[RMDB]
Structure probing data (DMS and 2A3) for a 177-nucleotide construct. The RNA was probed in 150 mM KOAc, 10 mM MgCl2 and 150 mM bicine (pH 8.5) at 24 C. The DMS profile rests on 2,007 reads.
RNA sequence: GGGAACGACUCGAGUAGAGUCGAAAAGAUAUGGAGCCUUGCAUCAGCAGCAACAGCUCGGAAACGAGACAUGCUGGUGUGGGCUCCUAAGUCAAAAGAAUCUCCUGUGUUCGCACAGGAGAUUCAAGAUACGACAGAGGUUCGCCUCUGUCGUAUCAAAAGAAACAACAACAACAAC
Reactivity to DMS in 0.01 (KOAc 150mM, MgCl2 10mM, bicine 150mM(pH8.5), 24C), signal-to-noise 3, nucleotides 027 to 126: g000a040u000a300u010g000g000a010g010c000c000u000u010g070c010a000u000c010a000g000c000a000g020c220a060a090c300a070g020c000u000c010g000g000a090a130a230c000g000a010g000a070c120a050u010g010c000u000g000g020u010g020u000g000g010g010c000u000c000c000u000a010a090g010u000c030a050a080a180a130g020a000a000u010c000u000c000c000u000g030u000g010u000u010c210g050c000a000c010a000g010g000a000g010a000u000u000c010a060a100
Reactivity to 2A3 in 0.01 (KOAc 150mM, MgCl2 10mM, bicine 150mM(pH8.5), 24C), signal-to-noise 1, nucleotides 027 to 126: g010a010u090a030u150g010g010a010g000c070c090u190u300g000c230a010u000c000a010g030c010a000g030c040a060a100c020a200g030c000u000c000g010g030a070a090a020c010g000a010g020a030c060a110u030g000c020u000g000g000u000g000u000g000g000g000c010u000c000c000u000a000a000g000u000c010a000a000a000a160g000a000a020u000c000u020c020c000u000g010u000g030u090u110c300g030c170a000c020a000g000g010a010g000a000u000u000c000a000a010